[RMDB]
Structure probing data (DMS and 2A3) for a 177-nucleotide construct. For DMS, 34,093 sequencing reads were counted. In probing experiments dimethyl sulfate is read out at A N1 and C N3, which are open when not base-paired. It was measured as part of the RMDB library OK1LIB. DMS adducts were read by reverse transcription with MarathonRT. The reactions ran in a buffer of 150 mM KOAc, 10 mM MgCl2 and 150 mM bicine (pH 8.5), at 24 C. 2A3 adducts were read by reverse transcription with SuperScript II with manganese.
RNA sequence: GGGAACGACUCGAGUAGAGUCGAAAAGAUGGUUUCAUCCGGAUUCAGUUUGUGGAUGAGAUCAGGGCAUUCAUCAUGGCCCAGUUUGAGGCCGCACGCCGGGCGAAAACGGAUGAUGACUGUAUGGGUAACCUAUCAAAUUCGUUUGAUAGGUUACAAAAGAAACAACAACAACAAC
Reactivity to DMS in 0.01 (KOAc 150mM, MgCl2 10mM, bicine 150mM(pH8.5), 24C), signal-to-noise 8, nucleotides 027 to 126: g010a120u010g000g010u000u000u000c000a010u000c000c000g000g010a110u000u020c270a120g010u020u000u010g020u030g000g010a020u000g000a070g000a010u000c010a050g010g010g010c020a020u010u000c060a040u010c070a050u020g010g000c020c010c010a110g010u000u010u000g000a270g000g000c010c010g000c080a110c200g020c100c020g000g010g000c050g000a090a020a050a090c030g000g010a030u000g010a020u010g010a030c070u010g010u010a090u030g010g010
Reactivity to 2A3 in 0.01 (KOAc 150mM, MgCl2 10mM, bicine 150mM(pH8.5), 24C), signal-to-noise 9, nucleotides 027 to 126: g100a070u090g000g020u000u010u000c000a000u000c010c010g050g050a080u090u140c090a130g300u090u140u170g300u190g020g010a010u010g030a010g000a010u020c010a010g010g050g010c010a030u020u030c010a020u070c020a050u130g140g000c010c010c010a010g000u010u030u100g070a070g040g050c000c010g010c040a080c110g110c130c010g040g040g040c070g040a030a030a010a000c010g020g020a010u010g010a010u040g010a010c030u030g050u120a170u210g150g020